[RMDB]
Source: RMDB library OK1LIB, as collected in RNAgym. The record gives the reactivity of an RNA of 177 nucleotides to DMS and 2A3. 2A3 is a SHAPE reagent: it acylates the 2'-hydroxyl of flexible nucleotides of all four kinds. The 2A3 profile rests on 4,446 reads. DMS adducts were read by reverse transcription with MarathonRT.
RNA sequence: GGGAACGACUCGAGUAGAGUCGAAAAGAGCGUCGAGAGACGAAGAGAAGUGCACCGAUCAGCAAUGGUGAACGUAAUGGUGCACAAGAGUAAGUCAGUGUAACGUUCUCAGGGCACUGGAGGCAGACCAGCAGUAUUACUUCGGUAAUACUGCUGGAAAAGAAACAACAACAACAAC
Reactivity to DMS in 0.01 (KOAc 150mM, MgCl2 10mM, bicine 150mM(pH8.5), 24C), signal-to-noise 5, nucleotides 027 to 126: g020a080g000c000g030u000c010g000a210g000a270g010a010c020g020a100a110g000a110g010a120a100g010u000g010c000a010c010c010g020a070u020c070a050g000c270a090a110u010g000g000u010g000a070a120c270g010u020a110a100u020g000g000u000g010c000a000c010a020a070g020a080g010u010a050a070g000u000c010a060g000u000g010u030a080a120c070g020u000u010c020u000c050a140g000g000g010c010a040c030u020g000g010a090g000g040c130a090g010a210
Reactivity to 2A3 in 0.01 (KOAc 150mM, MgCl2 10mM, bicine 150mM(pH8.5), 24C), signal-to-noise 4, nucleotides 027 to 126: g040a030g010c000g000u000c020g000a010g000a010g000a100c010g020a100a020g070a000g030a300a010g000u010g000c010a010c000c040g030a080u090c060a000g160c030a020a160u210g100g060u140g070a100a000c010g020u060a020a100u210g010g010u000g000c000a000c010a020a030g070a020g070u120a100a020g040u030c030a000g000u010g030u100a140a080c030g030u080u010c000u000c020a020g000g030g000c000a010c030u030g000g030a030g040g030c070a020g030a110